An RNA of 207 nucleotides, treated with 2A3 and read out base by base. 2A3 adducts were read by reverse transcription with SuperScript II with manganese.
RNA sequence: GGGAACGACUCGAGUAGAGUCGAAAAACAGUACAGGACUUUCGGCAUUAAACAUCACCUGCCGGACAGUUCCUCUUUUGUAGUAGCAGAUAACCGAUAGGGGUGCUGCAGCUUGCUCAAUAAUAGCUGGAAGAUUGGCGGGCGUGAUCUGGCUGGCACGUCAGUUCAAGUUCGCUUGAACUGACGUAAAAGAAACAACAACAACAAC
Reactivity to 2A3 in 0.01 (KOAc 150mM, MgCl2 10mM, bicine 150mM(pH8.5), 24C), signal-to-noise 2, nucleotides 027 to 156: a010c030a010g060u120a030c010a060g000g010a040c010u070u040u030c010g000g070c000a070u000u200a090a100a130c100a110u130c060a080c050c030u020g020c000c000g000g000a010c030a000g030u090u060c030c000u000c000u140u150u020u070g030u030a100g010u070a040g030c050a020g050a130u160a110a100c000c020g070a070u150a070g090g050g000g030u030g000c010u010g000c000a020g090c010u020u150g000c010u100c220a020a080u180a160a060u100a060g020c060u010g000g020a050a030g020a120u000u190g020g000c000g040g000g030c010g020u020g020a040u030c030u020g070g010c060u050g030g020c000

As a SHAPE reagent, 2A3 marks flexible, mostly unpaired nucleotides at the ribose 2'-OH.